Source: RMDB library M2RFPK, as collected in RNAgym. Chemical mapping of a 207-nucleotide RNA with 2A3. The RNA was probed in 150 mM KOAc, 10 mM MgCl2 and 150 mM bicine (pH 8.5) at 24 C.
RNA sequence: GGGAACGACUCGAGUAGAGUCGAAAAACAUAGGCCAUGCUUACGAGCAUGGCCUAUGACGAAUCUCAAGCAAUCAAGCAUUCUACUUCUAUUGCAACAAUGAGGAGCUUACGAGCUCCUCAGUGAAAAAAGAGAGUAAUGUUCGCAUUACUCUCAACGCUACAUGCAUGUUCGCAUGCAUGUAGCGAAAAGAAACAACAACAACAAC
Reactivity to 2A3 in 0.01 (KOAc 150mM, MgCl2 10mM, bicine 150mM(pH8.5), 24C), signal-to-noise 1, nucleotides 027 to 156: a000c000a000u000a000g000g000c000c000a020u010g070c000u120u120a090c300g040a000g010c000a000u020g000g000c000c000u000a000u000g000a000c000g040a040a040u000c000u000c050a000a000g010c010a000a060u040c010a060a000g050c030a170u260u150c050u140a020c070u070u070c090u110a060u020u080g050c090a180a040c010a130a230u020g000a000g000g000a000g000c000u080u060a070c100g060a030g000c050u000c000c000u000c000a000g000u010g080a020a020a020a020a020a020g000a000g000a000g000u000a000a000u000g030u050u090c220g000c110a000u000u000a010c000u000c000u000c000a000a000